RNA sequence: GGGAACGACUCGAGUAGAGUCGAAAAUGACCCUCUCAAGGUAGCGUAAUACCUAGCCGCUUAAUUGGCGGCUCGCAUGAAGGUUCAACGAGAGUCCCACUGUCCCCACAUUCAGCCCCGUGAAAUUCAUGAUGAUGUCCUUCGGGACAUCAUCAUGAAAAGAAACAACAACAACAAC
Reactivity to 2A3 in 0.01 (KOAc 150mM, MgCl2 10mM, bicine 150mM(pH8.5), 24C), signal-to-noise 2, nucleotides 027 to 126: u130g040a040c000c000c020u010c030u000c000a130a080g070g000u080a030g000c070g190u150a150a000u050a100c000c050u000a000g000c000c000g050c000u050u170a160a120u200u190g060g000c020g000g010c000u000c020g000c000a010u030g050a210a060g050g000u040u000c030a040a040c040g000a000g000a020g190u060c000c000c000a010c000u010g040u030c000c000c030c000a040c000a010u200u170c010a000g060c020c020c060c000g000u080g020a020a020a090u010u010
Chemical mapping of a 177-nucleotide RNA with 2A3. The reactions ran in a buffer of 150 mM KOAc, 10 mM MgCl2 and 150 mM bicine (pH 8.5), at 24 C.